The data come from the RNA Mapping Database (RMDB), library OK2TST.
Structure probing data (2A3 and DMS) for a 177-nucleotide construct.

RNA sequence: GGGAACGACUCGAGUAGAGUCGAAAAGUCAAUCAGCUAUACGUAUAAUAGCAAAUGCUGCAUCUCGUAAUGGUGUUACUUGUGCUGUAACACCAUCUAAUAUUACACUGCGUGGUAAUAUCGCUACGCUACACUUAGGUUUCGACCUAAGUGUAGCAAAAGAAACAACAACAACAAC
Reactivity to 2A3 in 0.01 (KOAc 150mM, MgCl2 10mM, bicine 150mM(pH8.5), 24C), signal-to-noise 5, nucleotides 027 to 126: g060u070c030a010a130u030c030a020g000c010u030a020u030a140c070g190u190a140u070a300a080u040a020g000c020a060a070a010u130g000c010u020g000c020a070u000c020u020c050g070u130a040a040u020g000g010u010g000u010u010a010c020u080u140g180u210g270c150u040g010u010a000a010c000a000c000c000a000u000c000u000a000a000u020a030u050u070a010c100a030c080u150g070c070g130u130g070g000u040a060a050u020a060u080c030g000c080u030a040c060
Reactivity to DMS in 0.01 (KOAc 150mM, MgCl2 10mM, bicine 150mM(pH8.5), 24C), signal-to-noise 4, nucleotides 027 to 126: g020u010c080a130a080u010c140a110g020c010u000a050u010a120c230g010u000a130u020a110a030u000a050g010c020a100a100a080u010g010c050u000g010c150a110u000c010u010c030g000u010a100a030u000g000g020u000g010u000u010a000c000u000u010g010u000g030c240u000g010u000a000a010c000a000c010c000a000u000c090u010a080a070u000a010u010u000a030c030a060c070u000g010c160g020u020g010g000u000a030a020u000a040u000c150g010c110u000a090c210
2A3 adducts were read by reverse transcription with SuperScript II with manganese. The DMS profile rests on 3,666 reads. Reactivities are given for positions 27 through 126.